Chemical mapping of a 177-nucleotide RNA with 2A3 and DMS.
RNA sequence: GGGAACGACUCGAGUAGAGUCGAAAAGUUGACUUGUUCGCAAGUCAACAAAGAAACUGGAAGGCGCGGCCAGCUGCAGCCGCAGUGAAUCAAAUGCAGCAAAAACCCGACGGUUCGCCGUCGGGAAGAAAUUGAUAUCGUUCGCGAUAUCAAUUUCAAAAGAAACAACAACAACAAC
Reactivity to 2A3 in 0.01 (KOAc 150mM, MgCl2 10mM, bicine 150mM(pH8.5), 24C), signal-to-noise 3, nucleotides 027 to 126: g000u000u000g010a000c000u000u020g030u070u110c130g030c090a010a000g010u010c000a000a000c010a000a010a010g030a020a180a010c100u100g030g130a130a030g120g010c060g000c010g030g000c010c000a030g010c010u000g010c020a000g010c000c010g020c020a030g070u110g150a050a060u100c030a060a000a020u010g000c010a000g020c000a030a000a010a030a010c010c000c000g000a000c000g000g050u030u050c190g020c050c010g000u000c000g000g010g000a000a000
Reactivity to DMS in 0.01 (KOAc 150mM, MgCl2 10mM, bicine 150mM(pH8.5), 24C), signal-to-noise 2, nucleotides 027 to 126: g020u000u000g000a000c010u000u000g010u000u010c170g020c000a000a010g000u000c000a020a000c000a050a100a080g010a070a130a090c050u000g000g020a070a130g010g020c120g040c020g000g010c000c040a060g030c000u000g010c000a040g000c000c010g020c000a070g020u010g010a090a100u020c110a020a020a050u010g000c000a000g020c010a030a030a040a080a040c010c000c000g000a000c010g000g010u000u020c210g000c000c000g010u000c000g000g000g000a000a020
Record summary:
DMS adducts were read by reverse transcription with MarathonRT. It was measured as part of the RMDB library M2PK50. Values are in units of 0.01, from 0 to 300, in steps of 10. 2A3 is a SHAPE reagent: it acylates the 2'-hydroxyl of flexible nucleotides of all four kinds. The reactions ran in a buffer of 150 mM KOAc, 10 mM MgCl2 and 150 mM bicine (pH 8.5), at 24 C.